[RMDB]
RNA sequence: GGGAACGACUCGAGUAGAGUCGAAAAGCAUGAAUGUAGGCCCUGCCCACAGGGCAGAUGACUCCAUACUAGAACAUAGUGGAAUAGACAAAAACCUUCUACAGCAUGUAUGAGACACUUGGCCCAUCGACCCUCUUCAUGCCCUUUACAUUCAGCAGUAAUAAUGAUGGUUCGCCAUCAUUAUUACAAAAGAAACAACAACAACAAC
Reactivity to DMS in 0.01 (KOAc 150mM, MgCl2 10mM, bicine 150mM(pH8.5), 24C), signal-to-noise 2, nucleotides 027 to 156: g050c040a030u000g020a070a060u000g000u000a040g010g000c000c020c050u010g030c090c020c070a170c090a170g010g030g060c010a000g020a070u000g000a050c030u000c030c020a060u010a030c030u000a200g000a120a120c080a130u010a160g040u020g010g010a030a110u010a050g020a180c040a090a090a100a280a070c020c030u000u000c020u020a040c000a160g070c000a090u000g000u000a040u000g000a100g010a030c050a080c050u000u020g020g010c030c000c020a130u010c070g000a030c000c000c020u030c080u000u000c020a050u000g030c000c030c040u000u020u000a050c060a130u000u000c040a050g000c080a300
Reactivity to 2A3 in 0.01 (KOAc 150mM, MgCl2 10mM, bicine 150mM(pH8.5), 24C), signal-to-noise 7, nucleotides 027 to 156: g040c030a040u020g010a060a010u070g000u160a030g000g030c010c020c020u000g010c000c010c020a300c150a150g000g000g000c000a010g020a080u090g030a040c040u010c050c010a020u010a030c030u070a060g100a230a050c050a100u100a080g020u010g030g020a020a050u120a160g110a030c130a070a150a020a030a040c030c020u050u010c020u040a010c010a020g020c030a030u070g010u040a020u040g090a090g010a060c030a020c100u090u090g040g000c000c030c020a060u120c040g110a180c020c010c000u020c000u030u000c000a000u030g000c000c010c030u100u170u160a090c040a100u050u110c030a020g000c020a010